[RMDB]
RNA sequence: GGGAACGACUCGAGUAGAGUCGAAAAUACUUCUUCAAAUGAUAAAAAGCUUCAUCGCUACCUUAGUGUACCAAAAUGCAUCAGCACAAGUGUACUAUAUAAAUCACUAUUGAUCUGUCUAGCAAGAAUCUCUUACUGGUUUCGACCAGUAAGAGAUAAAAGAAACAACAACAACAAC
Reactivity to DMS in 0.01 (KOAc 150mM, MgCl2 10mM, bicine 150mM(pH8.5), 24C), signal-to-noise 3, nucleotides 027 to 126: u000a110c110u000u010c020u000u010c040a060a100a150u010g000a120u000a050a080a090a150a050g010c030u000u010c110a030u010c130g010c050u000a080c060c030u000u000a040g030u000g020u000a040c010c030a030a070a110a130u000g000c020a060u010c100a040g000c040a060c060a040a060g040u000g010u000a090c090u000a100u010a070u000a010a040a040u000c010a060c090u000a050u000u000g000a050u020c040u000g010u000c050u020a070g000c100a080a060g000a110
Reactivity to 2A3 in 0.01 (KOAc 150mM, MgCl2 10mM, bicine 150mM(pH8.5), 24C), signal-to-noise 2, nucleotides 027 to 126: u050a010c020u040u020c000u090u010c040a060a080a150u180g040a060u110a090a190a000a030a000g030c010u080u080c030a050u060c050g030c030u030a050c000c020u040u040a040g010u020g040u100a030c000c040a060a000a080a000u050g020c000a020u060c030a060g020c020a020c000a070a040g020u040g020u090a020c060u020a020u010a020u010a300a080a020u060c000a020c030u050a060u140u070g030a050u030c000u010g020u060c020u030a000g030c030a050a060g060a070